[RMDB]
RNA sequence: GGGAACGACUCGAGUAGAGUCGAAAAUCAAAAACUUCACUGCAUAUUAGGGCUGUGAUUGAGCUUUACAAGUUAUUUGGUUUGAACGACUUGUUCGCCCUUUUGUGGGAAAAAUCGCAAUGCCAGACUAGUGUAAACCAUUCGUGGUUUACACUAGAAAAGAAACAACAACAACAAC
Reactivity to DMS in 0.01 (KOAc 150mM, MgCl2 10mM, bicine 150mM(pH8.5), 24C), signal-to-noise 6, nucleotides 027 to 126: u010c030a030a040a030a100a070c060u000u000c100a070c060u010g000c060a070u000a170u000u010a090g010g000g020c000u000g010u000g010a070u010u010g000a080g000c070u000u000u000a080c190a050a030g010u000u000a100u000u000u000g000g010u000u000u000g010a060a040c040g010a070c120u020u010g010u000u000c080g010c010c000c010u000u010u010u010g030u000g000g010g000a030a050a040a060a060u000c040g010c080a050a070u010g010c030c040a140g010a260
Reactivity to 2A3 in 0.01 (KOAc 150mM, MgCl2 10mM, bicine 150mM(pH8.5), 24C), signal-to-noise 5, nucleotides 027 to 126: u030c010a000a030a010a000a050c030u080u050c040a040c070u050g040c030a040u120a170u300u210a150g130g100g000c010u040g040u020g070a040u030u110g080a030g020c030u120u080u140a080c060a060a020g010u030u050a180u170u070u060g100g040u060u090u130g050a050a020c020g130a120c070u040u120g030u040u030c020g000c000c000c000u000u100u080u120g110u080g000g020g070a130a080a000a020a010u030c000g000c020a040a000u070g050c020c010a040g050a080